Structure probing data (DMS and 2A3) for a 207-nucleotide construct.

RNA sequence: GGGAACGACUCGAGUAGAGUCGAAAACGGUGCGGUCUGCUCGUUGUUGCGGCCUGCGCGUAGUCACUCACCAGCGAGUUCUGGCUGCGCGCGGCUAAGUAGGCACGCCUAGGACUCCACAAGCAUGCGAAAGGAUGGAUGUGAGAGAGCAUGCGAAACAUUCCUACGUAUUCGUACGUAGGAAUGUAAAAGAAACAACAACAACAAC
Reactivity to DMS in 0.01 (KOAc 150mM, MgCl2 10mM, bicine 150mM(pH8.5), 24C), signal-to-noise 2, nucleotides 027 to 156: c110g030g010u030g010c070g000g010u000c030u000g000c000u000c060g040u000u000g030u000u000g020c040g000g000c010c010u000g080c010g000c020g000u000a000g020u000c010a070c050u000c030a120c050c080a210g020c180g010a240g000u010u000c030u010g010g010c010u000g030c010g020c030g020c050g010g000c030u000a010a030g010u000a050g010g030c030a090c010g020c010c010u000a070g020g030a160c020u000c020c020a090c140a130a190g020c030a030u000g000c010g000a080a080a150g020g010a140u000g020g000a150u000g010u010g000a120g010a120g000a300g030c000a010u000g010c000g000a110a110
Reactivity to 2A3 in 0.01 (KOAc 150mM, MgCl2 10mM, bicine 150mM(pH8.5), 24C), signal-to-noise 3, nucleotides 027 to 156: c090g030g020u100g050c170g000g010u000c010u020g030c030u050c080g020u020u030g020u040u040g030c100g030g010c010c040u090g000c000g000c000g000u000a000g010u010c010a010c040u000c010a070c050c040a100g160c060g090a010g000u060u070c050u050g000g000c000u000g000c000g000c010g000c010g000g000c010u010a070a000g000u000a000g000g000c040a030c040g000c010c000u030a030g010g060a040c020u020c050c030a050c030a040a030g000c000a010u010g010c030g070a150a010a000g060g020a060u130g060g060a020u090g040u050g040a030g010a010g010a010g030c010a000u020g000c020g020a050a020
Overview: DMS adducts were read by reverse transcription with MarathonRT.